[RMDB]
RNA sequence: GGGAACGACUCGAGUAGAGUCGAAAAGGGGUCGAGGGACAUGAGUCACUACCAGUCGGUAAUACUACCUGAAGCCUCCACGGGUAGUGCCAGACUGAUGUGACUCAACAGCCCUCGACGGAGGCACCCAAAAGGCUGUACCUUCGGGUACAGCCAAGCCAUUAACAGAGUUCGCUCUGUUAAUGGCAAAAGAAACAACAACAACAAC
Reactivity to 2A3 in 0.01 (KOAc 150mM, MgCl2 10mM, bicine 150mM(pH8.5), 24C), signal-to-noise 1, nucleotides 027 to 156: g050g040g020g000u000c000g000a020g000g030g000a000c170a240u130g000a020g000u000c000a020c040u080a050c020c000a000g000u020c030g030g000u070a170a090u110a270c040u030a000c000c020u030g070a110a020g060c000c040u010c020c000a020c050g000g020g000u000a000g000u010g060c090c080a090g010a000c000u010g000a020u050g000u000g000a000c000u000c000a000a000c010a010g020c000c000c000u010c020g000a000c020g000g010a000g000g030c000a080c020c010c030a000a160a020a000g000g000c010u000g000u010a000c000c030u080u110c210g110g000g000u000a000c000a030g020c000c000a000a000

An RNA of 207 nucleotides, treated with 2A3 and read out base by base. The reactions ran in a buffer of 150 mM KOAc, 10 mM MgCl2 and 150 mM bicine (pH 8.5), at 24 C.